Record summary: Chemical mapping of a 177-nucleotide RNA with 2A3 and DMS.
RNA sequence: GGGAACGACUCGAGUAGAGUCGAAAAAGGGUGAUGCAUCCUGGUCUUCUACUAUGAUCUUCUCUCUUCACCCCGUCGAGUGUGACGAGGAGUGUUCUGAAGUAGAGGCUUCAGAUUUAGAAGAAGGGCAAUAGAGAGGGUUCGCCCUCUCUAUUGCAAAAGAAACAACAACAACAAC
Reactivity to 2A3 in 0.01 (KOAc 150mM, MgCl2 10mM, bicine 150mM(pH8.5), 24C), signal-to-noise 1, nucleotides 027 to 126: a000g040g000g000u060g070a180u150g080c020a020u020c020c000u050g070g040u010c020u000u000c000u050a040c000u030a080u180g060a030u000c000u090u000c010u000c000u000c040u000u030c020a030c000c000c030c010g050u040c050g010a160g160u200g100u220g060a010c020g000a120g000g010a090g020u000g060u070u040c030u010g010a020a010g020u100a040g020a070g180g000c000u010u020c000a020g020a080u040u050u080a040g000a060a010g000a020a040g080g070
Reactivity to DMS in 0.01 (KOAc 150mM, MgCl2 10mM, bicine 150mM(pH8.5), 24C), signal-to-noise 1, nucleotides 027 to 126: a020g010g010g030u000g020a160u000g040c060a050u000c010c010u000g000g020u000c020u000u000c010u000a050c060u010a080u000g000a040u000c030u000u000c010u010c040u000c050u000u000c010a120c030c000c000c030g030u000c060g010a150g030u010g020u020g000a000c020g000a050g000g020a140g010u010g040u020u000c090u010g010a030a010g040u010a070g000a090g010g000c100u000u000c040a010g010a090u010u000u000a070g000a090a030g010a030a070g000g000
Values cover nucleotides 27 to 126. The DMS profile rests on 1,427 reads. The RNA was probed in 150 mM KOAc, 10 mM MgCl2 and 150 mM bicine (pH 8.5) at 24 C.